An RNA of 177 nucleotides, treated with DMS and 2A3 and read out base by base. For DMS the reverse transcriptase was MarathonRT. The RNA was probed in 150 mM KOAc, 10 mM MgCl2 and 150 mM bicine (pH 8.5) at 24 C.
RNA sequence: GGGAACGACUCGAGUAGAGUCGAAAAGAUAUGGAGACCUUGUCAGAGUGAUGACUGCAUCGAUCUAUAAUCUCGGAAACGAGAUUAUAGGGAGCAGUCUAACUCUUGGAUUUAGGUCUCCUAAGUCCACUAUAUGGUACUUCGGUACCAUAUAGUGAAAAGAAACAACAACAACAAC
Reactivity to DMS in 0.01 (KOAc 150mM, MgCl2 10mM, bicine 150mM(pH8.5), 24C), signal-to-noise 6, nucleotides 027 to 126: g010a090u010a300u010g000g010a020g010a000c000c000u000u000g000u000c000a040g010a030g010u000g010a260u010g000a020c000u000g000c000a300u000c200g010a070u010c000u000a000u000a000a000u000c000u000c000g000g000a090a130a230c000g010a010g000a000u000u000a000u000a000g010g010g010a020g030c000a010g000u000c000u000a130a010c000u000c000u000u010g000g010a020u010u000u000a000g020g010u000c010u000c000c000u000a010a090g010u000c030
Reactivity to 2A3 in 0.01 (KOAc 150mM, MgCl2 10mM, bicine 150mM(pH8.5), 24C), signal-to-noise 7, nucleotides 027 to 126: g030a030u140a050u220g000g010a000g000a000c000c000u010u010g020u020c020a000g010a000g050u020g080a150u300g010a020c000u000g020c000a280u300c120g030a000u030c020u000a000u010a010a010u000c000u000c010g030g030a090a110a070c010g000a000g010a010u000u000a000u000a000g000g000g000a020g000c000a000g010u000c000u000a000a010c000u030c000u000u090g030g000a010u300u290u230a000g000g000u000c000u000c000c000u000a000a000g000u000c010